[RMDB]
RNA sequence: GGGAACGACUCGAGUAGAGUCGAAAAACGGGCAGUGGCGAUGGCAACGCGGCAGCCGCAGGGUCGACUUCUUCGCAGCCGCAACAGACGGGAUACGGGCAAAGAGGGGUCCUCGUUCUGUUGGAAGCUCGCCUAUCCCUUUCGAGGGAUAGGCGAGAAAAGAAACAACAACAACAAC
Reactivity to 2A3 in 0.01 (KOAc 150mM, MgCl2 10mM, bicine 150mM(pH8.5), 24C), signal-to-noise 1, nucleotides 027 to 126: a000c070g020g000g000c040a060g010u030g030g000c020g020a110u070g020g000c010a030a010c030g000c000g090g050c050a000g080c030c040g080c010a010g000g020g020u000c000g010a050c030u080u010c000u070u030c030g000c030a020g070c000c020g000c040a020a010c020a040g000a000c020g030g000g000a030u100a120c000g000g070g000c090a000a150a010g090a030g070g020g020g000u040c010c000u060c000g020u060u050c030u000g000u020u010g040g000a030a020g050